[RMDB]
RNA sequence: GGGAACGACUCGAGUAGAGUCGAAAAGUGGCAUACUUCGGUAUGCCACAAACCAGACCCUAUGUGGAACACGCUCUACUGCGUGAUCCCAAGUAGAUCCCAAAAGUCGUGGGUUCGCCCACGACAAUCUGUAUCAGAACUUCGGUUCUGAUACAGAAAAAGAAACAACAACAACAAC
Reactivity to DMS in 0.01 (KOAc 150mM, MgCl2 10mM, bicine 150mM(pH8.5), 24C), signal-to-noise 2, nucleotides 027 to 126: g020u000g000g000c000a000u000a000c000u000u020c230g060g010u010a010u000g010c010c010a010c020a000a020a090c170c120a210g010a060c040c030c000u000a020u000g010u010g030g010a030a060c000a000c000g000c000u000c300u010a130c210u000g010c010g030u000g020a020u000c010c000c040a090a050g000u000a080g010a080u000c000c000c010a060a050a110a120g000u000c000g020u000g010g000g010u010u020c210g010c000c000c000a000c000g020a010c010a020a010
Reactivity to 2A3 in 0.01 (KOAc 150mM, MgCl2 10mM, bicine 150mM(pH8.5), 24C), signal-to-noise 3, nucleotides 027 to 126: g000u010g000g000c000a000u010a020c010u040u050c190g060g010u000a000u000g000c010c000a000c000a000a000a000c020c010a010g080a010c000c020c020u030a060u110g110u200g000g020a030a010c000a000c010g030c000u080c070u280a250c200u150g000c010g010u000g010a030u020c000c000c010a040a030g000u030a000g020a120u030c010c010c000a050a120a020a060g000u010c000g000u000g020g010g020u010u040c200g110c000c000c000a010c000g000a000c000a000a000

Conditions: 150 mM KOAc, 10 mM MgCl2 and 150 mM bicine (pH 8.5), 24 C. Structure probing data (DMS and 2A3) for a 177-nucleotide construct. DMS adducts were read by reverse transcription with MarathonRT. The data come from the RNA Mapping Database (RMDB), library M2PK50. For 2A3 the reverse transcriptase was SuperScript II with manganese.